[RMDB]
RNA sequence: GGGAACGACUCGAGUAGAGUCGAAAAUCCGCUCUAGCGAGGCCGAAUCCCUUCUCGAGGUUAUGUUACUGUAAGGCCUGCCUUAAGUAAGUGGUGUUGACGUUUGGGUCCUACGCAACGAGACCCCUCAUUCCUGCCAAUUCGUUGGCAGGAAUGAAAAAGAAACAACAACAACAAC
Reactivity to 2A3 in 0.01 (KOAc 150mM, MgCl2 10mM, bicine 150mM(pH8.5), 24C), signal-to-noise 1, nucleotides 027 to 126: u050c000c000g000c000u080c020u020a080g190c000g030a000g050g000c070c000g000a020a090u020c080c000c000u000u000c020u000c060g110a140g020g000u170u020a080u210g030u000u000a110c010u100g140u060a110a110g000g020c030c030u070g000c000c000u040u010a030a000g050u030a180a000g070u090g000g030u040g000u110u030g000a090c030g050u100u000u020g040g000g020u110c050c000u000a030c000g070c090a000a020c000g030a030g080a130c000c020c000c000
Reactivity to DMS in 0.01 (KOAc 150mM, MgCl2 10mM, bicine 150mM(pH8.5), 24C), signal-to-noise 1, nucleotides 027 to 126: u020c100c090g020c010u010c020u000a150g000c030g000a020g000g010c090c000g030a140a090u010c020c000c020u000u000c010u000c050g020a050g010g000u010u000a110u010g000u030u010a030c030u020g010u010a070a060g030g000c050c050u000g040c000c010u000u000a070a020g010u000a040a070g040u000g020g030u030g000u000u000g000a070c160g000u000u000u000g040g000g000u010c020c030u010a070c140g000c190a070a050c140g000a090g000a100c000c000c000c270